An RNA of 207 nucleotides, treated with DMS and 2A3 and read out base by base.

[RMDB]
RNA sequence: GGGAACGACUCGAGUAGAGUCGAAAACUCGCUCAAACAUACAGAGAUGUUGUGCGAGAUGAAUCUCUCUGCAUUAGAAUGGUCGAAGAAUCAGCGGCGAUUCGAGACCAAAUUAGAAGCCGCAUUAACAGCUUUGGAACACGCCUUGCUGACGUGACCUAAAUCAUCGGUUCGCCGAUGAUUUAGGAAAAGAAACAACAACAACAAC
Reactivity to DMS in 0.01 (KOAc 150mM, MgCl2 10mM, bicine 150mM(pH8.5), 24C), signal-to-noise 2, nucleotides 027 to 156: c000u000c040g000c000u000c030a130a050a070c050a080u000a300c050a210g010a230g030a080u000g000u010u000g030u030g030c010g020a050g030a070u000g010a120a080u000c110u000c010u000c000u000g060c000a110u000u000a060g010a170a130u010g000g000u000c000g030a230a280g000a050a010u000c010a100g030c130g030g000c100g010a030u010u000c000g010a300g000a200c020c020a020a090a090u010u000a140g040a060a070g020c010c000g020c010a220u000u000a160a070c070a050g000c000u010u000u000g010g020a060a220c040a050c000g020c030c070u010u030g000c180u000g000a030c020g030u000g000a230
Reactivity to 2A3 in 0.01 (KOAc 150mM, MgCl2 10mM, bicine 150mM(pH8.5), 24C), signal-to-noise 2, nucleotides 027 to 156: c000u000c020g000c000u020c030a060a100a060c030a000u130a040c050a060g190a040g010a100u020g000u000u010g000u010g000c020g000a000g000a010u090g070a100a120u040c060u020c030u020c070u060g060c090a130u070u070a120g110a300a110u130g010g010u010c000g010a060a000g000a030a040u010c020a120g010c000g010g000c010g000a000u010u010c010g000a000g040a010c000c000a000a000a010u010u010a010g070a150a000g000c010c000g020c070a000u050u180a060a070c050a040g030c050u180u140u170g070g060a120a020c030a020c040g010c010c000u050u080g000c050u010g030a030c000g010u010g040a020